The record gives the reactivity of an RNA of 177 nucleotides to 2A3. Reactivities are given for positions 27 through 126.

[RMDB]
RNA sequence: GGGAACGACUCGAGUAGAGUCGAAAAAGGAACCGUUGCUUCGGAUUGUCGAUCCGGACUCGAAUAUCGAGCUCGGACCGGGACGUAUCGGCGAGAUUUGGAUUCACGGUAAGAAUGUGUCUACCGGGAGAUCACCUUCCUUCGGGAAGGUGAUCUCAAAAGAAACAACAACAACAAC
Reactivity to 2A3 in 0.01 (KOAc 150mM, MgCl2 10mM, bicine 150mM(pH8.5), 24C), signal-to-noise 1, nucleotides 027 to 126: a030g080g000a000a000c000c040g000u050u060g010c040u010u010c000g080g000a120u020u100g160u090c050g040a030u070c000c000g000g000a000c020u000c000g060a160a160u060a050u300c000g000a000g030c000u000c070g000g040a020c010c010g030g030g000a000c030g050u000a000u020c020g180g000c110g090a090g000a120u070u080u160g000g000a030u050u140c010a000c000g000g020u040a210a110g130a180a080u300g000u050g000u110c070u050a000c030c010g120g070
The reactions ran in a buffer of 150 mM KOAc, 10 mM MgCl2 and 150 mM bicine (pH 8.5), at 24 C. 2A3 adducts were read by reverse transcription with SuperScript II with manganese.